[RMDB]
RNA sequence: GGGAACGACUCGAGUAGAGUCGAAAAGUACGUGUUACGCGUAUGGGUCGGUGACGCGCCAAACGCCAGCCUGUUUGUCCUGGGGAUGGCCAUAGCCGCCGAAGGGACUCUGGCGUACAACGGCUCGAAAAGCGUUGAGGUUCGCCUCAACGCUUUUAAAAGAAACAACAACAACAAC
Reactivity to DMS in 0.01 (KOAc 150mM, MgCl2 10mM, bicine 150mM(pH8.5), 24C), signal-to-noise 1, nucleotides 027 to 126: g000u030a000c040g020u030g010u040u020a030c140g000c000g000u010a060u000g000g000g000u030c020g000g030u000g000a140c050g000c100g040c040c000a060a110a040c030g010c010c000a050g020c300c050u020g000u000u000u000g010u000c000c020u000g100g000g030g010a060u020g000g020c000c300a080u040a080g000c000c000g010c010c000g000a270a170g000g000g000a040c000u030c010u010g000g000c000g020u040a040c100a080a080c000g000g000c040u060c040g000
Reactivity to 2A3 in 0.01 (KOAc 150mM, MgCl2 10mM, bicine 150mM(pH8.5), 24C), signal-to-noise 2, nucleotides 027 to 126: g040u020a030c040g130u070g160u240u270a090c090g000c000g060u080a060u180g050g000g020u070c110g020g020u090g080a040c020g090c030g110c020c040a080a110a000c000g010c000c000a020g010c100c170u200g160u150u110u200g030u040c000c000u050g000g000g180g050a200u120g040g030c030c070a180u140a190g000c000c000g010c000c000g040a100a030g000g000g000a000c000u000c000u000g020g000c030g000u000a000c040a030a000c000g000g000c090u040c010g010
Annotation: Chemical mapping of a 177-nucleotide RNA with DMS and 2A3. Conditions: 150 mM KOAc, 10 mM MgCl2 and 150 mM bicine (pH 8.5), 24 C. The data come from the RNA Mapping Database (RMDB), library OK1LIB.